[RMDB]
RNA sequence: GGGAACGACUCGAGUAGAGUCGAAAAGAUAUGGACGCUGGGUAGGGAGAGACAGGUCGGAAACGACCUGAAUCUCUUUGAUCUAUAAGCGUCCUAAGUCAAAGACUCUGACUUCGGUCAGAGUCAACAUAACGUCUAGGUUCGCCUAGACGUUAUGAAAAGAAACAACAACAACAAC
Reactivity to 2A3 in 0.01 (KOAc 150mM, MgCl2 10mM, bicine 150mM(pH8.5), 24C), signal-to-noise 3, nucleotides 027 to 126: g010a020u040a030u090g000g000a000c010g020c030u080g080g230g230u100a020g040g040g020a040g000a000g020a010c000a010g000g020u000c010g020g010a050a020a020c010g010a010c010c010u000g010a030a040u000c000u000c000u060u090u040g020a000u000c000u020a080u030a300a050g000c010g000u000c000c000u000a010a000g000u010c020a040a110a090g000a000c000u000c000u020g010a010c010u060u120c300g040g000u000c010a000g010a000g000u000c000a000a000
Reactivity to DMS in 0.01 (KOAc 150mM, MgCl2 10mM, bicine 150mM(pH8.5), 24C), signal-to-noise 6, nucleotides 027 to 126: g000a050u000a300u010g000g010a020c010g050c010u000g040g010g020u010a030g000g000g000a000g000a010g010a270c010a000g000g010u000c000g010g000a080a070a150c000g010a020c010c000u000g000a050a180u000c000u000c000u000u010u010g000a030u000c010u000a080u010a190a070g010c010g020u000c000c000u000a010a090g000u000c030a100a140a160g000a020c000u000c000u010g010a010c000u000u020c250g020g000u000c000a010g010a010g010u000c000a030a120